[RMDB]
RNA sequence: GGGAACGACUCGAGUAGAGUCGAAAAGCAAAUCUAACAAUAACUUCGCUUUAGCUGCAUAAUAGUAGCUUAGCGUUCCUCCCUCCAUCGCCCAUGUGGUAGGGUAAGGGACUCACUUUAAGUGGGCUACGCCGGAGUUCGCCGUCUGAGGACGAAGGACUUAGGUCAGGUUCGCCUGACCUAAGUCAAAAGAAACAACAACAACAAC
Reactivity to 2A3 in 0.01 (KOAc 150mM, MgCl2 10mM, bicine 150mM(pH8.5), 24C), signal-to-noise 4, nucleotides 027 to 156: g050c040a040a050a190u100c080u170a050a120c050a090a140u170a090a080c060u090u060c020g030c010u080u130u160a010g000c000u000g020c010a040u050a150a070u090a300g010u000a000g000c000u020u020a000g000c000g010u030u000c000c010u040c000c000c010u000c000c010a010u010c000g020c000c000c010a010u030g010u020g010g040u130a010g030g000g000u040a090a100g010g000g030a050c010u040c070a070c030u100u150u200a080a010g020u000g030g000g000c010u040a020c060g010c000c010g000g040a030g020u020u060c030g020c050c010g010u020c050u110g050a040g010g060a030c020g020a050a050g100
Reactivity to DMS in 0.01 (KOAc 150mM, MgCl2 10mM, bicine 150mM(pH8.5), 24C), signal-to-noise 1, nucleotides 027 to 156: g030c060a050a080a110u020c080u010a100a180c070a140a080u000a080a080c030u020u020c020g020c020u010u000u010a020g070c010u070g000c000a120u000a060a140u000a200g000u000a000g020c000u000u010a050g030c000g010u000u000c000c000u000c010c010c000u000c010c000a040u000c020g010c010c010c020a230u000g050u000g000g010u000a040g020g000g010u030a010a050g000g010g000a120c010u000c040a030c010u050u000u000a050a100g060u000g000g010g050c060u010a040c040g000c050c000g030g010a210g000u000u030c000g020c020c000g050u010c050u010g000a190g000g000a040c000g030a100a090g000
Structure probing data (2A3 and DMS) for a 207-nucleotide construct. It was measured as part of the RMDB library RSTRND. For 2A3 the reverse transcriptase was SuperScript II with manganese. The 2A3 profile rests on 2,923 reads. 2A3 is a SHAPE reagent: it acylates the 2'-hydroxyl of flexible nucleotides of all four kinds. DMS adducts were read by reverse transcription with MarathonRT. The DMS profile rests on 2,081 reads.